[RMDB]
RNA sequence: GGGAACGACUCGAGUAGAGUCGAAAAGCGCCUUACCUGCCCUAUAGGAGCCUGGCGCUGAGGCUGGACGAUGUGUUUGCUGCCCCAGACCCAGUGGCAGCCCUGCAUGCUUUCCUCAGAGAGCCGCGGCUACAUAUGUUUUCGAACAUAUGUAGCCAAAAGAAACAACAACAACAAC
Reactivity to DMS in 0.01 (KOAc 150mM, MgCl2 10mM, bicine 150mM(pH8.5), 24C), signal-to-noise 5, nucleotides 027 to 126: g010c050g010c010c000u000u000a090c100c060u000g000c040c030c050u000a130u010a090g010g010a090g020c090c100u000g010g010c020g030c010u010g000a050g000g010c110u000g010g000a100c050g000a050u000g010u000g010u010u010u000g010c010u000g000c040c010c030c020a070g000a160c040c030c020a100g020u010g000g010c000a030g010c020c170c050u000g000c040a050u000g000c030u000u000u000c010c040u010c060a080g010a090g000a100g000c030c110g020c230
Reactivity to 2A3 in 0.01 (KOAc 150mM, MgCl2 10mM, bicine 150mM(pH8.5), 24C), signal-to-noise 3, nucleotides 027 to 126: g050c000g030c000c010u050u070a100c020c030u050g070c030c010c010u160a170u080a180g110g000a050g020c010c060u050g010g000c040g000c030u000g020a020g010g040c030u040g040g000a030c070g100a140u090g050u040g060u120u200u170g060c020u010g010c000c010c050c020a040g040a270c000c030c020a010g030u080g040g000c000a010g000c010c020c000u010g000c010a020u070g000c000u050u030u030c010c000u030c020a020g070a000g030a020g070c000c030g060c090
The record gives the reactivity of an RNA of 177 nucleotides to DMS and 2A3. For DMS, 6,371 sequencing reads were counted.